RNA sequence: GGGAACGACUCGAGUAGAGUCGAAAAUACCGUCUUCUCCCCGACGGUUUCAAUCCAUAGCUUCACGUUGUGUAGCGUAGGUGGAAGGUAUCGUGUGGUGAAUAAACACCACAUAGUCUCUUAGGGGUCAAGCUGAUAAACUUCGGUUUAUCAGCAAUCUUAGGGUUGCUUUCGAGCAACCCUAAGAAAAAGAAACAACAACAACAAC
Reactivity to 2A3 in 0.01 (KOAc 150mM, MgCl2 10mM, bicine 150mM(pH8.5), 24C), signal-to-noise 3, nucleotides 027 to 156: u040a000c000c010g000u010c010u240u030c040u160c000c000c000c000g000a000c010g010g000u000u040u060c030a010a030u030c000c010a030u050a110g010c000u080u120c020a040c070g300u300u300g020u060g020u060a010g020c030g050u080a150g060g060u020g000g020a040a040g090g030u140a050u200c030g000u010g000u000g000g000u020g030a070a090u150a220a090a010c000a000c000c000a000c000a000u030a000g020u020c020u000c000u080u200a030g000g010g020g000u030c100a070a020g000c000u000g000a000u000a000a000a010c010u000u060c180g050g000u010u000u000a000u000c000a000g000c000a000a010
Reactivity to DMS in 0.01 (KOAc 150mM, MgCl2 10mM, bicine 150mM(pH8.5), 24C), signal-to-noise 1, nucleotides 027 to 156: u000a040c030c000g060u000c020u010u010c040u000c020c000c010c120g000a060c020g000g000u010u000u000c020a080a170u000c020c010a080u000a210g000c040u010u030c020a040c030g040u000u020g040u000g030u000a080g060c020g040u000a050g010g020u000g000g000a060a070g010g010u000a060u010c040g010u010g000u000g050g020u030g000a120a190u000a200a210a180c000a030c000c000a010c000a000u000a030g000u000c070u000c010u010u000a140g060g010g010g030u000c070a050a220g030c000u000g000a030u000a000a020a020c000u000u000c300g050g010u010u000u000a000u000c000a030g000c000a000a000